[RMDB]
RNA sequence: GGGAACGACUCGAGUAGAGUCGAAAAAUGACUGGAAGAGUCUGGGGAACUUUGGGAGAUUAAAGGAUAGAGAUGGUGGAUGCUGGGUGAUUUCUACCUGUGAGCACGAUUACCAGAUGUCCUUGAUAGUGUGCAAUGCCCAUGCCAUUUCCUUCAACUAAUCAUGCCUCUUCGGAGGCAUGAUUAGAAAAGAAACAACAACAACAAC
Reactivity to 2A3 in 0.01 (KOAc 150mM, MgCl2 10mM, bicine 150mM(pH8.5), 24C), signal-to-noise 2, nucleotides 027 to 156: a000u090g000a020c020u000g050g020a070a000g000a050g090u020c050u070g000g000g000g040a010a040c050u090u140u110g000g050g000a050g020a020u110u210a090a070a060g020g000a020u090a020g090a010g000a040u010g060g020u040g100g030a060u050g050c050u080g010g030g000u050g090a210u070u080u120c020u120a030c010c010u060g080u100g110a020g020c030a020c050g040a070u040u160a050c020c000a010g020a080u090g020u020c000c000u020u060g080a120u110a100g080u060g010u040g070c010a020a020u040g000c000c000c050a020u040g010c020c000a040u060u060u010c000c040u070u170c070a080a040
Reactivity to DMS in 0.01 (KOAc 150mM, MgCl2 10mM, bicine 150mM(pH8.5), 24C), signal-to-noise 1, nucleotides 027 to 156: a090u000g000a080c040u000g030g030a120a150g000a100g020u000c050u000g020g030g020g020a030a060c080u000u020u000g040g010g000a140g000a070u000u000a090a050a070g020g000a090u000a040g000a150g000a080u010g040g020u000g010g020a100u000g010c000u000g000g050g060u000g000a140u000u020u000c060u000a030c030c030u010g020u010g000a120g010c010a020c100g010a150u000u010a080c000c000a040g020a160u000g000u000c070c030u000u000g000a080u000a070g030u000g000u000g020c010a080a070u000g000c020c020c020a100u000g000c010c060a190u020u000u000c000c000u030u000c020a080a090